[RMDB]
RNA sequence: GGGAACGACUCGAGUAGAGUCGAAAAGAUAUGGACUUGUAAGUUCGCUUGGAUUUAUAUGGGAACCGUGGGUCGGAAACGACCCACUCAGUACCAUAUUGUCAGCGAAUUGAGAGUCCUAAGUCAAAAUACGGGUCAUCUUCGGAUGACCCGUAAAUGGAUUUCUAUGAUUCGUCAUAGAAAUCCAAAAAGAAACAACAACAACAAC
Reactivity to DMS in 0.01 (KOAc 150mM, MgCl2 10mM, bicine 150mM(pH8.5), 24C), signal-to-noise 1, nucleotides 027 to 156: g000a090u000a200u000g000g020a010c020u010u000g000u010a300a090g040u000u000c020g000c030u000u020g070g040a060u000u000u000a000u000a020u000g010g000g010a070a050c210c300g000u010g030g000g000u000c000g040g010a180a110a300c000g010a000c010c000c000a000c000u010c000a110g000u000a100c020c000a000u000a000u020u010g010u000c000a060g020c000g000a020a010u000u000g000a300g000a050g010u000c000c000u000a030a140g010u000c090a070a150a150a270u000a000c000g020g000g000u030c000a020u000c000u010u020c300g050g020a030u000g000a000c030c000c000g000u000a000a000a130